This 177-nucleotide RNA was probed chemically with DMS and 2A3. For 2A3, 1,851 sequencing reads were counted. 2A3 is a SHAPE reagent: it acylates the 2'-hydroxyl of flexible nucleotides of all four kinds. The RNA was probed in 150 mM KOAc, 10 mM MgCl2 and 150 mM bicine (pH 8.5) at 24 C.
RNA sequence: GGGAACGACUCGAGUAGAGUCGAAAAAUGAUAUAUAUGGAUGAGACAGAAGUGGCCCCGUUGACGAGUUUAACUUAGAUUAAGUAGGACGCAUGAUCUUGAGCUCUUUUCCUAUACUUUGUCCUAUGGAAUUGAAUGGAUUCGUCCAUUCAAUUCCAAAAGAAACAACAACAACAAC
Reactivity to DMS in 0.01 (KOAc 150mM, MgCl2 10mM, bicine 150mM(pH8.5), 24C), signal-to-noise 2, nucleotides 027 to 126: a030u000g000a060u040a090u060a070u010a050u030g000g020a030u000g000a070g010a170c010a070g030a030a110g020u000g000g010c030c000c000c020g000u000u010g000a060c110g000a120g020u000u010u000a060a120c060u000u020a110g000a140u010u000a040a050g000u020a070g000g010a010c040g060c140a020u000g020a030u010c030u010u050g020a040g030c090u020c000u000u010u000u010c000c010u000a060u030a090c110u030u020u040g020u000c000c000u000a180u000
Reactivity to 2A3 in 0.01 (KOAc 150mM, MgCl2 10mM, bicine 150mM(pH8.5), 24C), signal-to-noise 3, nucleotides 027 to 126: a000u100g080a030u070a040u040a020u000a040u120g050g000a010u050g030a080g010a050c010a020g010a070a020g030u040g020g000c000c010c000c000g070u020u110g040a080c030g020a000g080u020u040u180a060a040c030u030u100a050g080a190u090u030a080a010g010u030a030g110g030a000c010g020c020a040u080g070a070u060c020u050u050g040a030g020c010u000c000u110u020u010u000c020c000u040a040u040a080c030u000u070u110g020u030c020c010u030a040u080